[RMDB]
RNA sequence: GGGAACGACUCGAGUAGAGUCGAAAAUGCUGCUGGAAUCCUGUCAAAUCUGACAUGCAACAACCAACGAAAUAAAGUUACAGUUUGCCAAGUUGGAGGCGUGGAUGCAUUGGUUCGCACCAUAUGCGGUUCUUGAGACGUUCGCGUCUCAAGAACCAAAAGAAACAACAACAACAAC
Reactivity to DMS in 0.01 (KOAc 150mM, MgCl2 10mM, bicine 150mM(pH8.5), 24C), signal-to-noise 1, nucleotides 027 to 126: u000g030c070u040g000c020u000g000g010a140a190u000c050c010u000g040u000c130a090a100a070u000c050u000g010a050c070a030u000g050c020a090a110c040a100a090c110c020a040a060c010g010a040a110a040u030a010a050a150g010u010u000a070c290a030g000u000u000u000g000c040c060a080a190g020u010u000g000g030a060g000g020c030g020u000g010g010a090u010g000c000a050u000u000g000g030u000u000c110g000c070a080c010c000a030u050a100u010g050c100
An RNA of 177 nucleotides, treated with DMS and read out base by base. Conditions: 150 mM KOAc, 10 mM MgCl2 and 150 mM bicine (pH 8.5), 24 C. Reactivities are given for positions 27 through 126. The data come from the RNA Mapping Database (RMDB), library OK2TST.